RNA sequence: GGGAACGACUCGAGUAGAGUCGAAAAACACUUCAUCCAGCUGCCUGCGCUGAGAACACAGCACAUGCUCAGUGGAAUGGAAUCUGGAGCAGGCACAAAACCCCUCGGAAGGCACAGAAACCUGAUAAUAUCAUUUAUCGUUCGCGAUAAAUGAUAUAAAAGAAACAACAACAACAAC
Reactivity to DMS in 0.01 (KOAc 150mM, MgCl2 10mM, bicine 150mM(pH8.5), 24C), signal-to-noise 7, nucleotides 027 to 126: a080c100a100c090u000u000c070a110u010c030c030a070g010c100u000g010c050c020u000g010c030g000c010u010g000a050g010a100a090c130a140c070a080g000c090a070c100a090u000g010c080u000c060a040g010u000g000g000a120a090u000g000g010a060a090u000c020u000g000g010a070g010c040a010g000g020c030a050c070a040a030a090a170c050c020c020c030u000c090g010g010a080a050g000g010c060a030c070a070g000a050a080a110c040c030u000g010a080u010a080
Reactivity to 2A3 in 0.01 (KOAc 150mM, MgCl2 10mM, bicine 150mM(pH8.5), 24C), signal-to-noise 4, nucleotides 027 to 126: a000c050a010c020u090u080c030a120u040c010c020a010g020c050u040g000c000c000u020g000c030g000c010u040g030a010g030a120a020c070a010c020a080g100c070a070c010a130u140g010c020u040c070a020g010u040g030g060a130a030u080g030g050a060a060u010c010u040g030g000a020g020c030a020g010g020c040a000c010a050a120a020a040c000c000c020c000u000c000g020g030a070a020g020g000c050a030c010a080g110a050a030a020c000c010u020g020a020u070a150